Conditions: 150 mM KOAc, 10 mM MgCl2 and 150 mM bicine (pH 8.5), 24 C. An RNA of 207 nucleotides, treated with DMS and 2A3 and read out base by base. The DMS profile rests on 8,622 reads. Values cover nucleotides 27 to 156. For 2A3 the reverse transcriptase was SuperScript II with manganese.

[RMDB]
RNA sequence: GGGAACGACUCGAGUAGAGUCGAAAAAAGGAUGGAGUUUAAACCAGUUACUAUUAAAGUGUCGAAGGUAGGAAGUGGAGAAAUCGUGCCAUACAACGUCGAAAGCAUAGAUAUGGUUUCAUACGCUCUCUUUGACAAUGUGAAAGACUUUAGGGUAAAUGAGUACACAAUUCGUUGUGUACUCAUUAAAAGAAACAACAACAACAAC
Reactivity to DMS in 0.01 (KOAc 150mM, MgCl2 10mM, bicine 150mM(pH8.5), 24C), signal-to-noise 4, nucleotides 027 to 156: a080a090g020g030a040u000g000g000a090g010u000u000u000a090a100a130c060c010a160g010u000u000a070c070u010a100u000u010a060a100a090g030u010g010u010c030g010a030a080g020g010u000a060g040g010a140a080g030u000g040g010a190g010a050a050a060u000c050g040u000g000c020c010a060u000a070c040a080a080c110g010u010c160g010a090a100a110g020c040a060u000a090g010a120u000a100u000g020g010u000u010u000c020a080u000a120c030g020c030u000c030u000c020u000u000u000g000a050c010a030a100u010g000u010g000a090a080a110g010a040c000u010u000u000a060g000g010g020u000a040
Reactivity to 2A3 in 0.01 (KOAc 150mM, MgCl2 10mM, bicine 150mM(pH8.5), 24C), signal-to-noise 7, nucleotides 027 to 156: a000a000g060g010a030u080g030g020a050g060u080u130u170a090a070a040c030c010a020g020u060u070a040c040u020a050u220u130a110a090a040g050u030g020u040c020g020a030a020g070g020u070a050g160g060a140a010g030u030g050g030a040g040a030a030a010u070c060g020u040g030c010c010a030u040a100c040a100a040c070g100u100c040g150a110a070a020g020c030a030u040a090g060a060u050a030u050g030g000u020u090u050c090a090u120a140c030g010c010u010c000u000c000u020u020u020g010a020c030a050a070u080g040u060g080a110a050a020g020a010c000u080u130u160a060g040g000g040u050a030